[RMDB]
RNA sequence: GGGAACGACUCGAGUAGAGUCGAAAAAAUGCCGCCUCAGUUCCAAGCUCUUUCGUGGCACUGUAAACAGUCCUGUUGAGUUAGGGGCAGUCAACCACGUUGCGAAGCUAAAUUAUCUGGUCGAGAGUUACGAUUCCCUACUUCGGUAGGGAAUCAAUCGGAUAAGAUACUUCGGUAUCUUAUCCGAAAAAGAAACAACAACAACAAC
Reactivity to DMS in 0.01 (KOAc 150mM, MgCl2 10mM, bicine 150mM(pH8.5), 24C), signal-to-noise 1, nucleotides 027 to 156: a040a070u010g030c060c050g040c000c010u000c040a130g030u000u010c050c050a170a300g000c010u000c020u000u010u000c050g000u000g000g000c030a060c030u020g000u000a040a120a110c130a220g000u010c000c020u000g020u000u010g020a190g000u000u000a060g000g000g030g000c040a030g000u000c040a040a030c000c000a010c070g020u000u000g010c080g020a100a170g000c070u020a020a050a040u000u000a060u010c050u020g040g030u000c030g010a120g010a160g000u000u000a080c010g000a050u010u000c000c020c020u000a020c000u000u000c270g020g010u000a000g020g010g020a000a000u000c000a000a100
Reactivity to 2A3 in 0.01 (KOAc 150mM, MgCl2 10mM, bicine 150mM(pH8.5), 24C), signal-to-noise 2, nucleotides 027 to 156: a020a000u110g020c030c040g030c020c000u090c030a030g030u060u100c020c000a050a050g010c000u030c010u060u070u090c080g030u040g000g030c120a010c070u050g050u050a000a060a180c000a040g010u010c010c010u020g010u140u130g070a080g030u110u090a070g000g000g000g010c020a010g050u020c010a020a080c040c000a020c040g040u030u020g020c060g100a070a020g000c060u090a020a050a110u180u160a080u110c080u040g000g020u040c030g030a000g000a020g140u100u090a070c100g000a000u000u000c000c000c000u010a010c000u010u040c080g060g000u000a000g000g000g000a000a000u000c000a000a000